[RMDB]
Chemical mapping of a 177-nucleotide RNA with DMS. DMS adducts were read by reverse transcription with MarathonRT.

RNA sequence: GGGAACGACUCGAGUAGAGUCGAAAAGCCGGCAGGUCAGGGCGCCCCUCCCCACGCCGCGACCCUCCCCACGUGCUGCCGCCAGGGCUGCGGGCCUCCGCCUGAUCCGCGCGAGCGGGGCCGAAAGUAGAUGGUAGUCAUUCGUGACUACCAUCUAAAAAGAAACAACAACAACAAC
Reactivity to DMS in 0.01 (KOAc 150mM, MgCl2 10mM, bicine 150mM(pH8.5), 24C), signal-to-noise 2, nucleotides 027 to 126: g000c040c030g010g030c080a090g000g000u010c080a060g010g000g010c030g010c060c020c030c040u000c030c010c010c040a120c080g020c020c030g010c060g000a140c010c010c010u000c020c010c010c040a140c130g030u010g040c030u010g000c040c020g020c030c050a110g000g000g000c040u000g000c040g020g020g000c000c030u020c070c030g010c030c010u000g000a090u000c030c060g010c040g020c130g000a160g010c000g010g000g000g000c010c040g010a040a050a110g010